RNA sequence: GGGAACGACUCGAGUAGAGUCGAAAAGUCGUCGUCGACGAAGGCAGCUAAGUUGGUGACGCCGAGUGGAGUAAAGACGGAGAACCUCCGCUAGUCGGAAAGACUCCGCUUCCUCCGGCUGACCCUCCUUCAGCUCGCCGCUAGUCGAGCGGACAACCAAUGCGUAAACCUUCGGGUUUACGCAUUGAAAAGAAACAACAACAACAAC
Reactivity to 2A3 in 0.01 (KOAc 150mM, MgCl2 10mM, bicine 150mM(pH8.5), 24C), signal-to-noise 2, nucleotides 027 to 156: g050u060c030g000u020c030g010u010c000g000a000c000g010a040a040g000g010c010a010g000c010u010a010a000g030u010u000g010g010u010g030a000c010g000c000c000g050a110g050u020g010g030a020g010u180a110a110a000g100a100c000g010g000a020g010a020a060c030c020u010c010c010g000c060u080a060g160u300c010g000g000a000a070a030g060a040c020u000c000c000g000c000u000u000c010c000u000c000c000g000g010c000u010g030a010c000c000c000u020c000c000u010u010c120a010g000c010u090c120g010c000c010g000c030u000a000g000u000c010g000a030g100c020g020g010a010c000a000a000c030
Reactivity to DMS in 0.01 (KOAc 150mM, MgCl2 10mM, bicine 150mM(pH8.5), 24C), signal-to-noise 1, nucleotides 027 to 156: g030u020c010g010u000c000g000u030c000g000a070c030g040a170a300g000g010c010a020g040c000u000a120a100g000u000u000g060g000u000g020a300c260g000c010c050g000a080g050u010g030g050a010g000u000a080a190a120g010a240c010g030g020a050g050a140a170c210c070u000c020c000g000c070u010a090g000u010c000g000g000a140a110a110g000a300c030u000c080c000g000c000u000u000c020c000u000c000c010g010g030c020u000g050a300c300c050c040u000c030c000u000u000c090a060g020c020u000c180g030c030c010g050c060u040a100g020u000c050g000a040g010c030g010g020a080c040a040a120c040